The record gives the reactivity of an RNA of 177 nucleotides to 2A3 and DMS. 2A3 adducts were read by reverse transcription with SuperScript II with manganese. The reactions ran in a buffer of 150 mM KOAc, 10 mM MgCl2 and 150 mM bicine (pH 8.5), at 24 C. 2A3 is a SHAPE reagent: it acylates the 2'-hydroxyl of flexible nucleotides of all four kinds.

RNA sequence: GGGAACGACUCGAGUAGAGUCGAAAACACAGGCGACUUAAUCGGAGAGCGGUUACACGCGAGGAAGAUGAAAUUAUUACAUCAGUAGACUGGAGAUUACUACAACUUGCGUUGCUAUCUCAAAUAAUCCAUUAGAGUGUUUCGACACUCUAAUGGAAAAAGAAACAACAACAACAAC
Reactivity to 2A3 in 0.01 (KOAc 150mM, MgCl2 10mM, bicine 150mM(pH8.5), 24C), signal-to-noise 4, nucleotides 027 to 126: c110a010c030a030g050g030c020g010a040c080u130u180a040a060u130c070g060g000a040g000a010g070c130g030g040u070u080a060c070a010c080g000c020g000a010g020g030a070a120g030a020u050g040a050a100a050u300u210a130u110u150a070c010a020u000c000a020g030u040a010g050a080c070u080g200g020a110g040a100u070u080a040c000u010a000c010a070a020c010u010u010g010c020g030u000u060g000c010u030a040u030c020u000c020a050a100a050u160a030a050
Reactivity to DMS in 0.01 (KOAc 150mM, MgCl2 10mM, bicine 150mM(pH8.5), 24C), signal-to-noise 4, nucleotides 027 to 126: c070a090c120a080g010g000c020g030a060c080u000u000a110a080u010c060g000g010a110g000a070g020c090g000g000u010u000a070c120a070c020g000c010g000a030g000g000a100a120g020a020u000g000a080a090a110u000u000a100u010u010a140c020a030u010c020a090g000u000a030g010a080c120u000g030g000a080g010a110u000u010a070c020u010a030c050a110a110c050u000u000g010c040g010u000u010g020c050u000a080u000c010u000c020a030a060a060u010a060a130